[RMDB]
RNA sequence: GGGAACGACUCGAGUAGAGUCGAAAAUGGGGGCGGUUGCAUGUGAAAUGAGUGGCUUACCGGCCGGAAUGCAGUGGCGGCCAGUUCAGGAGGCUGCUGCCGAAAGAGAUGCAUCCUGAUACACUACUCACCAUGGGCUAUUCGUAGCCCAUGGUGAAAAAGAAACAACAACAACAAC
Reactivity to DMS in 0.01 (KOAc 150mM, MgCl2 10mM, bicine 150mM(pH8.5), 24C), signal-to-noise 2, nucleotides 027 to 126: u000g010g000g010g030g010c040g010g020u000u010g060c020a080u000g040u000g020a150a100a070u000g040a070g060u000g020g010c000u000u000a140c190c130g020g020c030c010g000g000a080a070u000g000c010a040g070u000g000g010c040g000g000c020c010a080g020u000u010c070a110g020g030a150g020g000c020u000g030c060u000g000c010c110g000a060a140a090g010a050g000a070u010g030c060a070u000c000c030u020g020a120u020a070c150a140c140u000a130c220
The record gives the reactivity of an RNA of 177 nucleotides to DMS.